[RMDB]
RNA sequence: GGGAACGACUCGAGUAGAGUCGAAAACAUACGGACUUCGGUCCGUAUGAAAGAACCUCAAAUUCACGCAAACUUCCGCGUCAUCGCGAGGAAGCGAGGAAAAAAUCGAGGUGUUCGCACCUCGAAAUCUAGCCUUUUAGUUCGCUAAAAGGCUAGAAAAAGAAACAACAACAACAAC
Reactivity to 2A3 in 0.01 (KOAc 150mM, MgCl2 10mM, bicine 150mM(pH8.5), 24C), signal-to-noise 2, nucleotides 027 to 126: c000a000u000a000c000g000g010a000c000u020u070c230g030g000u000c000c000g000u010a000u000g000a000a010a010g040a070a090c010c010u070c050a100a120a080u100u070c040a010c060g020c030a090a140a150c040u100u020c090c030g060c040g120u160c100a200u300c030g030c010g010a030g000g010a020a030g000c000g020a160g000g000a070a120a000a000a000a000u050c010g000a000g010g010u010g000u050u030c200g000c080a000c010c010u000c000g000a010a000a000
Reactivity to DMS in 0.01 (KOAc 150mM, MgCl2 10mM, bicine 150mM(pH8.5), 24C), signal-to-noise 3, nucleotides 027 to 126: c000a020u000a000c000g000g010a030c000u010u000c230g040g040u000c000c000g000u000a010u000g010a060a090a110g000a130a160c020c000u000c150a070a150a110u000u000c050a050c090g030c050a090a140a140c040u000u000c060c030g030c010g020u000c200a130u010c070g000c000g010a050g020g000a090a180g010c040g010a130g010g000a000a010a090a060a170a090u000c000g000a010g050g020u000g010u000u010c190g010c000a010c010c010u000c000g000a000a060a090

Structure probing data (2A3 and DMS) for a 177-nucleotide construct. For DMS the reverse transcriptase was MarathonRT. For DMS, 1,865 sequencing reads were counted. The RNA was probed in 150 mM KOAc, 10 mM MgCl2 and 150 mM bicine (pH 8.5) at 24 C.